[RMDB]
RNA sequence: GGGAACGACUCGAGUAGAGUCGAAAACCGCGCCGAUGAGAGUGCAAUGAAGGCGGUGCGGAAGGCAUUGAAGGACCAGCGCAACUCAGAGACGACGCGGAAGAAGCGAAACAAGCGCAGUCGACCAAUGUCGACCGUUGUUCGCAACGGUCGACAUAAAAGAAACAACAACAACAAC
Reactivity to 2A3 in 0.01 (KOAc 150mM, MgCl2 10mM, bicine 150mM(pH8.5), 24C), signal-to-noise 3, nucleotides 027 to 126: c000c000g000c000g010c020c010g070a140u150g010a010g000a010g150u140g000c040a050a090u230g090a080a080g130g010c060g060g010u010g020c010g000g170a090a030g150g010c020a040u000u080g040a160a070g090g030a090c030c010a070g010c030g000c080a000a170c000u020c020a030g000a000g010a160c030g000a000c000g020c010g080g010a070a000g070a030a000g020c010g010a030a070a100c020a170a080g020c000g000c050a010g040u010c010g000a110c010c040a060
Reactivity to DMS in 0.01 (KOAc 150mM, MgCl2 10mM, bicine 150mM(pH8.5), 24C), signal-to-noise 2, nucleotides 027 to 126: c030c000g000c040g040c050c000g000a090u040g040a300g010a090g000u010g000c120a040a150u000g040a200a100g000g000c040g050g010u020g000c060g000g020a110a020g000g060c070a120u000u000g010a030a120g010g020a150c150c000a090g000c190g000c070a120a070c050u000c040a040g000a180g060a090c090g000a050c000g030c000g000g000a020a070g000a110a060g000c000g000a130a070a060c120a130a090g030c060g000c070a130g010u000c020g020a040c000c100a160